Source information
The data come from the RNA Mapping Database (RMDB), library M2PK50. Chemical mapping of a 177-nucleotide RNA with 2A3 and DMS. For DMS, 4,461 sequencing reads were counted.
RNA sequence: GGGAACGACUCGAGUAGAGUCGAAAACUACGAUGCUUCGGCAUCGUAGAAAGAAAACUCAAGACGAAUGCGCUGAAAAACCUCUUGAGACAGCGCAAAGAAAAACUUGGUUCUUCGGAACCAAGAAGAACUAACAAAAGUUCGCUUUUGUUAGUUCAAAAGAAACAACAACAACAAC
Reactivity to 2A3 in 0.01 (KOAc 150mM, MgCl2 10mM, bicine 150mM(pH8.5), 24C), signal-to-noise 5, nucleotides 027 to 126: c000u000a000c000g000a010u010g000c010u050u090c210g100g010c020a000u000c000g000u000a000g000a000a000a000g000a000a050a010a030c050u060c070a060a030g150a060c070g070a210a060u050g000c010g000c010u020g050a090a020a040a090a090c050c020u160c080u130u150g070a060g000a090c010a000g000c010g010c000a020a030a000g030a010a090a000a000a000c000u010u000g000g000u000u000c000u020u050c160g120g000a000a000c010c020a000a000g000a000a000
Reactivity to DMS in 0.01 (KOAc 150mM, MgCl2 10mM, bicine 150mM(pH8.5), 24C), signal-to-noise 4, nucleotides 027 to 126: c010u010a000c010g010a010u010g010c000u000u010c210g030g010c000a000u000c000g020u000a000g000a030a060a120g000a080a070a090a070c030u000c010a100a130g010a130c110g000a150a100u000g000c000g010c000u010g000a070a060a060a140a110c060c050u000c070u000u020g000a080g010a150c020a010g010c000g000c010a030a040a100g010a100a100a070a070a140c010u000u000g000g010u000u000c000u000u010c190g010g000a000a010c000c000a000a000g000a050a070